[RMDB]
RNA sequence: GGGAACGACUCGAGUAGAGUCGAAAACCUGGUAUGUUUUUUCAGGCAUGAACUGAACAAGAUAGUGUUGUGCGAUUGCCAGGUAAACAUUGCGCUCGUCACUGCUCAGCGCGUUUACAUCCGGUACCUCUAGUAGGAGAUUCGUCUCCUACUAGAGAAAAGAAACAACAACAACAAC
Reactivity to 2A3 in 0.01 (KOAc 150mM, MgCl2 10mM, bicine 150mM(pH8.5), 24C), signal-to-noise 4, nucleotides 027 to 126: c010c010u020g020g050u170a200u120g080u060u090u030u040u070u110c060a070g060g000c070a110u120g070a100a030c010u030g050a040a020c050a090a040g110a140u160a100g080u080g040u110u080g030u050g020c080g060a100u020u140g020c010c010a010g030g000u020a020a020a000c030a040u040u280g010c000g000c030u020c050g100u070c070a090c250u120g030c030u020c040a010g020c020g010c000g020u030u020u020a040c020a060u020c030c010g050g000u060a060c010
Reactivity to DMS in 0.01 (KOAc 150mM, MgCl2 10mM, bicine 150mM(pH8.5), 24C), signal-to-noise 8, nucleotides 027 to 126: c020c000u000g010g020u000a060u010g010u000u000u000u000u000u000c060a090g000g010c050a110u010g000a110a070c020u010g000a050a040c160a060a100g010a120u010a090g010u000g020u000u010g010u010g010c050g010a130u000u000g010c010c010a060g010g010u000a020a040a030c050a140u010u010g010c030g000c020u000c150g010u000c090a130c190u010g010c140u010c110a060g010c020g020c020g000u000u000u000a050c080a110u010c070c070g000g010u000a100c190
Background:
Chemical mapping of a 177-nucleotide RNA with 2A3 and DMS. Values cover nucleotides 27 to 126. For 2A3 the reverse transcriptase was SuperScript II with manganese. The RNA was probed in 150 mM KOAc, 10 mM MgCl2 and 150 mM bicine (pH 8.5) at 24 C.